RNA sequence: GGGAACGACUCGAGUAGAGUCGAAAAGGGACUGGCCCGAUGAAGCCCGGCAACCUAAGUUUAUUUAAGCGUAAAGUGAAGGUGCUAAUUCCAGCAAAAUGGUGUAUUCCGUUUUGGUAGAUAAGAGAAGCGUGACAUGAGUUCGCUCAUGUCACAACAUCUGUAAUCUGUUCGCAGAUUACAGAUGAAAAGAAACAACAACAACAAC
Reactivity to DMS in 0.01 (KOAc 150mM, MgCl2 10mM, bicine 150mM(pH8.5), 24C), signal-to-noise 3, nucleotides 027 to 156: g000g010g000a110c030u000g010g000c020c000c010g020a150u010g000a130a180g000c020c030c030g000g020c010a080a060c010c010u000a080a100g020u010u000u000a130u020u000u010a050a080g020c080g010u010a060a110a120g020u000g010a100a110g010g020u000g030c010u010a060a150u000u000c010c010a070g010c020a030a020a040a030u000g000g020u000g000u000a050u010u000c000c020g030u000u000u000u000g010g000u000a030g000a100u010a050a130g010a170g020a080a110g010c110g030u010g010a020c000a010u010g010a030g010u000u010c300g020c010u000c000a000u000g020u010c000a020c000a070a130
Reactivity to 2A3 in 0.01 (KOAc 150mM, MgCl2 10mM, bicine 150mM(pH8.5), 24C), signal-to-noise 6, nucleotides 027 to 156: g020g000g000a010c050u030g050g030c000c000c000g000a020u080g060a050a030g030c020c000c000g000g010c040a080a080c010c000u100a110a060g030u010u050u030a160u060u190u140a110a040g050c040g030u050a040a020a120g080u040g080a050a020g010g010u020g000c000u010a060a080u100u040c020c010a000g010c030a060a010a010a040u040g000g000u090g040u160a080u170u060c010c020g010u000u010u010u050g030g020u070a080g040a170u140a160a080g050a010g030a170a010g100c050g050u000g000a000c000a000u010g000a000g020u060u090c170g050c050u000c000a000u000g000u000c000a000c000a000a000